[RMDB]
RNA sequence: GGGAACGACUCGAGUAGAGUCGAAAAGCGUAUGCGCAGCCAGAUAUAAAGAAGAUUGGAAACGCCGGUUAUGACGAUCAUGCCGAGCGCCAGCGCAUAGCCCAGAUUCUGGUUAUGCAGCACGUCAUCCUCCCUAAUCAUUCGUGAUUAGGGAGGAAAAAGAAACAACAACAACAAC
Reactivity to DMS in 0.01 (KOAc 150mM, MgCl2 10mM, bicine 150mM(pH8.5), 24C), signal-to-noise 3, nucleotides 027 to 126: g000c060g010u020a020u010g020c010g040c050a050g010c010c030a040g020a040u000a160u010a100a090a100g000a130a090g000a100u010u000g000g010a110a050a190c080g010c000c030g020g020u010u020a040u010g000a150c200g020a120u020c030a050u020g000c010c000g010a140g010c010g000c020c060a020g000c070g000c060a070u010a110g000c030c010c090a110g000a150u000u000c020u000g010g010u000u000a050u000g020c040a070g000c150a040c040g000u000c090a160
Reactivity to 2A3 in 0.01 (KOAc 150mM, MgCl2 10mM, bicine 150mM(pH8.5), 24C), signal-to-noise 2, nucleotides 027 to 126: g010c010g000u070a040u100g030c010g010c010a000g000c000c000a020g000a010u120a000u080a160a160a020g100a050a030g060a140u030u050g020g000a080a090a050c000g010c000c020g000g020u170u290a040u040g050a030c080g020a070u170c020a010u030g000c010c010g000a010g000c010g000c010c000a000g040c070g000c050a030u050a100g010c000c000c000a050g040a140u070u050c010u020g040g000u000u040a030u080g000c050a030g000c030a010c020g040u040c020a050
Chemical mapping of a 177-nucleotide RNA with DMS and 2A3.
Reactivities are rounded to 0.1 and cut off at 0 and 3.
The RNA was probed in 150 mM KOAc, 10 mM MgCl2 and 150 mM bicine (pH 8.5) at 24 C.
It was measured as part of the RMDB library OK2TST.